[RMDB]
Notes:
Chemical mapping of a 177-nucleotide RNA with 2A3 and DMS.
RNA sequence: GGGAACGACUCGAGUAGAGUCGAAAACGGGGGUUCAUUUUGGCCACGGUACUAGGAAAUGGAAUCCUAAAAUGGCACCUUAUAUAUCUAUGAAGCGCAAGGGUAUUCAUAUUAUAAACCUUACCCGAUUUCAAUCAUCAUUCGUGAUGAUUGAAAUAAAAGAAACAACAACAACAAC
Reactivity to 2A3 in 0.01 (KOAc 150mM, MgCl2 10mM, bicine 150mM(pH8.5), 24C), signal-to-noise 2, nucleotides 027 to 126: c020g000g040g030g030g000u070u070c020a060u050u060u050u100g040g020c010c010a010c020g050g000u020a050c060u070a020g080g090a050a070a090u120g060g070a120a070u050c000c000u060a020a030a060a050u020g010g000c030a010c010c000u090u000a080u000a000u010a000u170c040u030a020u090g050a050a030g020c020g010c140a100a060g090g020g000u050a090u050u050c020a000u050a000u100u120a040u090a050a100a040c010c000u000u020a060c000c000c000g000
Reactivity to DMS in 0.01 (KOAc 150mM, MgCl2 10mM, bicine 150mM(pH8.5), 24C), signal-to-noise 4, nucleotides 027 to 126: c130g010g000g000g020g010u000u010c050a070u020u010u000u000g000g010c040c030a070c090g010g010u010a090c140u000a080g010g000a050a160a090u010g010g000a110a110u000c030c010u000a020a040a060a070u010g010g000c050a040c040c020u000u000a090u000a070u010a080u010c140u000a040u000g000a040a040g010c070g010c110a080a110g010g010g010u000a040u000u000c040a040u000a040u010u000a080u000a070a070a130c050c030u000u000a120c010c010c010g000
The 2A3 profile rests on 2,597 reads. For DMS the reverse transcriptase was MarathonRT.